An RNA of 207 nucleotides, treated with DMS and read out base by base. The RNA was probed in 150 mM KOAc, 10 mM MgCl2 and 150 mM bicine (pH 8.5) at 24 C. The DMS profile rests on 2,394 reads.
RNA sequence: GGGAACGACUCGAGUAGAGUCGAAAAUACUAAUCUUCGGAUUAGUACGUAAUCCUAAGUCGGAACCGUACAUGGAGCUUGUGGGUCGGAAACGACCCACAAAGCUAUGAAGUGUACUCAGUACGAUAUGGACACCAAACAGACUUCGGUCUGUUAAUAAUUCGAGAAAUUUCGAUUUCUCGAAUUAAAAAGAAACAACAACAACAAC
Reactivity to DMS in 0.01 (KOAc 150mM, MgCl2 10mM, bicine 150mM(pH8.5), 24C), signal-to-noise 2, nucleotides 027 to 156: u000a030c000u000a000a010u000c000u000u030c290g040g000a030u000u010a020g030u010a000c010g000u020a180a130u000c020c000u010a110a300g000u000c010g020g000a300a110c100c230g060u010a010c010a020u000g000g000a010g050c000u000u010g040u000g000g040g020u000c000g000g000a140a130a280c000g080a020c000c010c000a000c010a000a000a040g040c020u000a040u000g010a190a300g040u000g000u000a000c150u000c120a030g000u000a160c000g010a000u000a090u000g000g000a070c230a060c020c050a170a080a020c000a000g040a020c000u000u000c300g030g010u010c000u000g000u000u000a030a210